The record gives the reactivity of an RNA of 177 nucleotides to 2A3 and DMS. DMS adducts were read by reverse transcription with MarathonRT. The 2A3 profile rests on 9,400 reads. The reactions ran in a buffer of 150 mM KOAc, 10 mM MgCl2 and 150 mM bicine (pH 8.5), at 24 C. High 2A3 reactivity points to a flexible backbone, as in loops and unpaired stretches. Values are in units of 0.01, from 0 to 300, in steps of 10.
RNA sequence: GGGAACGACUCGAGUAGAGUCGAAAAGCGAGUACACGCAGUAUAGUGCCACUUGUGUGAGAAUACUUUUAGUACAAGCGAGUACACGCAGUAUACUGCCACUUGUGUGAGAAUACUUUUAGUACAAAUCUAUGCCUAGAUUCGUCUAGGCAUAGAUAAAAGAAACAACAACAACAAC
Reactivity to 2A3 in 0.01 (KOAc 150mM, MgCl2 10mM, bicine 150mM(pH8.5), 24C), signal-to-noise 9, nucleotides 027 to 126: g040c030g020a000g060u140a040c070a010c100g000c010a000g000u010a000u010a020g270u030g010c010c010a000c010u020u010g020u020g010u050g110a120g100a170a060u080a130c030u040u140u170u260a070g000u040a020c030a070a030g030c020g010a020g020u090a020c080a010c070g000c000a000g040u000a000u000a010c000u010g010c000c010a030c000u030u020g010u000g010u090g120a060g100a080a060u130a170c030u030u120u070u100a070g040u100a080c110a030a100
Reactivity to DMS in 0.01 (KOAc 150mM, MgCl2 10mM, bicine 150mM(pH8.5), 24C), signal-to-noise 8, nucleotides 027 to 126: g000c020g010a030g010u020a060c100a150c300g010c010a010g010u000a010u000a020g000u000g000c010c130a010c010u010u010g010u010g010u020g000a130g010a150a120u010a030c060u010u020u040u050a070g030u000a020c040a110a280g020c050g000a040g000u040a060c070a160c300g010c040a020g000u000a010u000a010c000u000g000c020c130a030c010u000u000g010u000g000u010g020a080g000a120a070u050a040c030u000u000u000u010a070g020u010a060c190a060a150